This 170-nucleotide RNA was probed chemically with 2A3 and DMS.
For 2A3, 64,684 sequencing reads were counted.

RNA sequence: GGGAACGACUCGAGUAGAGUCGAAAACUGCCGGGUGUUCCAUCCAUGGGAUCGGUGCCGAGUGAGGCUUAUCCCGGGGGGAUUGCCUCGGCCCCCUCCCUAACACGGGAGUCUCGGGCCCCCUCCCUACCAACCAUCUUCGGAUGGUUGAAAAGAAACAACAACAACAAC
Reactivity to 2A3 in 0.01 (KOAc 150mM, MgCl2 10mM, bicine 150mM(pH8.5), 24C), signal-to-noise 9, nucleotides 027 to 129: c030u030g040c000c000g010g010g010u030g040u080u040c020c020a070u060c060c040a150u210g020g000g020a030u050c080g060g090u090g070c000c010g050a060g070u240g070a060g030g010c010u070u100a040u030c000c000c010g030g010g010g010g010g000a030u060u140g020c010c010u060c020g010g000c000c000c000c000c000u010c000c000c000u100a200a060c090a040c140g010g000g020a010g040u000c040u060c030g020g000g000c000c000c000c000c000u000c000c010c000u020a060c020
Reactivity to DMS in 0.01 (KOAc 150mM, MgCl2 10mM, bicine 150mM(pH8.5), 24C), signal-to-noise 9, nucleotides 027 to 129: c070u000g020c000c000g000g000g050u030g020u060u000c010c000a060u020c050c100a120u060g020g040g000a010u020c110g040g060u060g060c010c010g020a100g000u060g040a100g000g000c040u010u030a030u020c000c000c000g000g000g000g000g000g000a010u000u000g020c000c000u020c000g000g010c000c000c010c100c030u000c010c020c010u040a100a110c220a120c260g010g000g000a000g000u020c080u040c200g030g000g030c000c020c010c020c010u010c020c000c050u030a050c150